The data come from the RNA Mapping Database (RMDB), library RSTRND. This 207-nucleotide RNA was probed chemically with DMS and 2A3. Reactivities are given for positions 27 through 156.
[RMDB]
RNA sequence: GGGAACGACUCGAGUAGAGUCGAAAAGUUAACAGCAUUGGGUAUGGUAACAACGAAGAGAGAUAUGCUGGCUUGCCAGCGAAAUGGGUAAUCCGCAGCCAAGUCCCUAAAGCGUUGCUUCACGCCAUGGGAAAGGUCCACAGACUAAGUGGAAGUGCAUACAUGGUCUCUUCGGAGACCAUGUAUGAAAAGAAACAACAACAACAAC
Reactivity to DMS in 0.01 (KOAc 150mM, MgCl2 10mM, bicine 150mM(pH8.5), 24C), signal-to-noise 2, nucleotides 027 to 156: g000u010u000a030a080c080a110g040c020a120u020u010g000g000g020u000a070u000g010g030u000a040a060c040a050a100c060g000a080a100g010a090g000a040g020a100u000a080u010g030c040u000g000g030c060u000u000g050c000c010a050g000c030g010a010a030a110u000g010g010g010u020a070a050u020c040c030g000c060a100g020c010c010a030a130g000u010c000c010c030u000a050a080a080g010c010g010u020u000g010c060u010u000c100a030c040g010c000c000a300u000g000g010g010a060a060a090g010g010u000c000c010a060c080a200g010a140c100u000a060a160g020u000g000g010a040a110g010u000g030
Reactivity to 2A3 in 0.01 (KOAc 150mM, MgCl2 10mM, bicine 150mM(pH8.5), 24C), signal-to-noise 4, nucleotides 027 to 156: g070u060u070a100a060c030a080g070c040a060u050u070g020g000g010u080a100u130g010g050u050a060a030c060a050a020c070g060a090a050g030a000g000a000g020a060u030a030u220g030c020u010g010g000c030u100u140g010c000c010a000g000c030g010a010a030a050u110g020g000g000u020a100a020u020c020c010g020c030a000g010c020c020a050a030g080u030c020c000c000u040a070a050a020g010c010g020u030u080g030c050u090u060c040a000c030g000c020c020a070u070g000g030g000a030a040a020g040g020u010c010c010a020c000a020g120a130c100u110a200a010g020u020g020g040a040a030g060u040g070
The RNA was probed in 150 mM KOAc, 10 mM MgCl2 and 150 mM bicine (pH 8.5) at 24 C. The 2A3 profile rests on 2,612 reads. Values are in units of 0.01, from 0 to 300, in steps of 10.